This 207-nucleotide RNA was probed chemically with DMS and 2A3. For 2A3, 5,767 sequencing reads were counted. For DMS, 3,808 sequencing reads were counted. It was measured as part of the RMDB library M2RFPK. The RNA was probed in 150 mM KOAc, 10 mM MgCl2 and 150 mM bicine (pH 8.5) at 24 C. High DMS reactivity at an A or C suggests that its Watson-Crick edge is free.
RNA sequence: GGGAACGACUCGAGUAGAGUCGAAAACGGUUACGCCUUCUUUACCGUUAUCAAGGAAGGUACUCGGCCAUGCUAAGGGAAGCAUUAUUCCUUAGGCGCAUGUCGCCGCCAACAUGGUGUGAGGGGAAAAAGUAUGCUGGGUUCGCCCAGCAUACAAGAUAGAUGUACGCUUCGGCGUACAUCUAUCAAAAGAAACAACAACAACAAC
Reactivity to DMS in 0.01 (KOAc 150mM, MgCl2 10mM, bicine 150mM(pH8.5), 24C), signal-to-noise 2, nucleotides 027 to 156: c020g010g000u010u000a030c020g010c000c000u000u000c000u000u000u000a040c000c010g010u000u000a000u000c110a020a000g000g030a010a000g000g030u000a040c010u000c020g030g010c030c000a030u010g000c000u020a130a240g000g040g000a030a070g010c200a170u020u000a160u020u000c000c010u000u000a120g020g010c000g030c030a140u010g030u000c000g080c010c000g000c110c060a030a030c020a030u010g020g040u000g010u010g020a070g000g000g000g020a030a050a080a140a160g020u010a010u000g020c000u020g000g000g040u000u000c300g030c000c000c000a030g000c000a000u000a000c000a010a080
Reactivity to 2A3 in 0.01 (KOAc 150mM, MgCl2 10mM, bicine 150mM(pH8.5), 24C), signal-to-noise 6, nucleotides 027 to 156: c010g000g010u040u020a040c070g000c000c000u000u010c020u000u040u020a020c010c020g260u110u080a030u080c070a000a000g020g000a000a010g000g010u060a070c000u000c010g030g000c000c000a010u030g010c030u100a060a050g020g000g000a020a010g030c080a220u110u120a130u200u100c000c010u030u060a080g000g000c010g000c030a160u240g090u260c030g000c050c000g020c020c010a020a010c000a010u000g000g010u080g090u150g050a040g010g020g020g070a030a070a010a040a000g010u000a000u000g000c000u000g000g000g020u020u030c090g080c020c000c000a000g010c000a000u000a000c000a000a000